[RMDB]
RNA sequence: GGGAACGACUCGAGUAGAGUCGAAAAAUAAGUUGCGCUUAAAUAAGACAACAGAUGUGGGAAAAAUAUGUGAAUGUGUAGUGUUGCUAUGUGUACUGUCUUUACAAGUAGCUAAUUAUUUUAGCACGCUUCCGUGUUAAUUCGUUAACACGGAAGCAAAAGAAACAACAACAACAAC
Reactivity to DMS in 0.01 (KOAc 150mM, MgCl2 10mM, bicine 150mM(pH8.5), 24C), signal-to-noise 2, nucleotides 027 to 126: a050u010a040a080g000u000u000g010c050g020c040u010u010a070a090a080u000a060a030g000a070c020a020a060c050a060g000a050u000g000u000g000g020g010a020a080a040a080a060u000a030u010g020u010g000a160a040u010g020u000g020u000a030g040u000g000u000u000g020c050u000a040u000g020u000g030u010a080c160u000g010u000c060u000u000u010a060c180a030a040g000u010a060g020c000u000a010a040u000u000a050u000u000u000u010a060g000c110a100c200
Reactivity to 2A3 in 0.01 (KOAc 150mM, MgCl2 10mM, bicine 150mM(pH8.5), 24C), signal-to-noise 1, nucleotides 027 to 126: a010u100a020a030g100u070u050g030c120g000c060u010u060a180a010a000u070a120a100g040a000c020a020a010c000a060g040a090u110g020u060g040g050g030a030a100a010a050a050u100a080u040g050u060g100a200a030u010g100u000g030u070a070g020u020g040u170u080g100c040u020a030u040g080u000g020u000a030c060u040g000u020c050u040u020u020a090c090a070a040g030u020a060g020c030u000a040a060u210u010a090u010u160u010u000a070g000c020a000c090